[RMDB]
An RNA of 177 nucleotides, treated with 2A3 and DMS and read out base by base. Source: RMDB library OK2TRN, as collected in RNAgym. The RNA was probed in 150 mM KOAc, 10 mM MgCl2 and 150 mM bicine (pH 8.5) at 24 C. Reactivities are given for positions 27 through 126. DMS adducts were read by reverse transcription with MarathonRT.
RNA sequence: GGGAACGACUCGAGUAGAGUCGAAAAUGUGCGGUUAUUACAAAACGUACCACUUAAUAUUGCUUUAGAUCGUAAUGAGCACGAAAGGAUAUGUUUAGAUAUAGCACACAAGUAUAUGCCAGGGCUGCUAUUAGUCAGAAUUCGUUCUGACUAAUAGAAAAGAAACAACAACAACAAC
Reactivity to 2A3 in 0.01 (KOAc 150mM, MgCl2 10mM, bicine 150mM(pH8.5), 24C), signal-to-noise 9, nucleotides 027 to 126: u090g010u010g020c110g030g070u060u050a050u060u080a090c060a020a080a010a000c010g010u020a010c000c020a210c060u050u040a070a040u110a130u200u100g020c000u070u050u100a090g030a160u130c010g020u030a120a140u190g020a000g000c020a010c050g050a060a030a020g030g000a040u030a010u080g010u010u030u010a020g010a030u040a010u030a110g010c010a010c000a000c010a040a030g060u020a100u020a030u290g050c020c010a040g030g070g010c040u080g010
Reactivity to DMS in 0.01 (KOAc 150mM, MgCl2 10mM, bicine 150mM(pH8.5), 24C), signal-to-noise 9, nucleotides 027 to 126: u000g010u000g010c070g010g020u000u000a030u010u000a260c160a090a030a030a030c030g020u000a020c020c030a130c040u000u000a050a150u010a190u010u000g000c020u000u000u000a090g010a130u010c230g010u010a100a100u010g000a030g010c010a020c090g000a070a030a030g000g000a050u000a010u000g000u000u000u000a070g010a150u000a030u000a070g010c010a050c010a020c050a030a090g010u010a070u000a080u010g010c020c010a100g000g000g020c130u000g010